Chemical mapping of a 177-nucleotide RNA with 2A3 and DMS.
The RNA was probed in 150 mM KOAc, 10 mM MgCl2 and 150 mM bicine (pH 8.5) at 24 C.
DMS (dimethyl sulfate) methylates the pairing face of unpaired adenines and cytosines.
It was measured as part of the RMDB library OK1LIB.
For 2A3, 51,793 sequencing reads were counted.
RNA sequence: GGGAACGACUCGAGUAGAGUCGAAAAUAUGGACGCGGUUGCAGGUGAAUACGCGUGUAUGGCGUUGCUGACACGGUCGAGCAGUGCGAUGUCGCGCGCUGUUUCAAGACCUUGCCUGCGCUAGAGAAGUCUCACUUGCAUUCGUGCAGGUGGGGCUAAAAGAAACAACAACAACAAC
Reactivity to 2A3 in 0.01 (KOAc 150mM, MgCl2 10mM, bicine 150mM(pH8.5), 24C), signal-to-noise 9, nucleotides 027 to 126: u270a070u080g090g030a020c030g010c030g050g020u090u260g000c040a030g000g080u070g110a060a040u140a110c020g010c030g020u040g050u070a140u110g060g000c040g030u030u100g050c100u050g030a070c020a030c210g050g030u020c020g010a010g000c010a000g010u010g020c010g060a100u160g090u300c070g000c000g000c000g000c100u010g030u020u180u050c050a070a020g010a010c000c000u000u010g000c000c000u010g010c010g000c010u020a020g010a010g030a240
Reactivity to DMS in 0.01 (KOAc 150mM, MgCl2 10mM, bicine 150mM(pH8.5), 24C), signal-to-noise 7, nucleotides 027 to 126: u030a060u010g010g000a050c020g020c010g000g010u010u020g080c300a300g000g040u080g010a060a040u020a050c040g010c020g010u000g010u010a040u000g000g000c010g000u010u030g010c080u020g000a110c040a060c100g010g010u000c010g000a040g010c000a010g010u000g010c000g000a120u020g000u050c180g010c000g010c010g010c030u010g000u000u020u020c130a120a120g000a030c010c010u000u010g000c010c000u000g010c010g000c030u000a040g000a120g000a120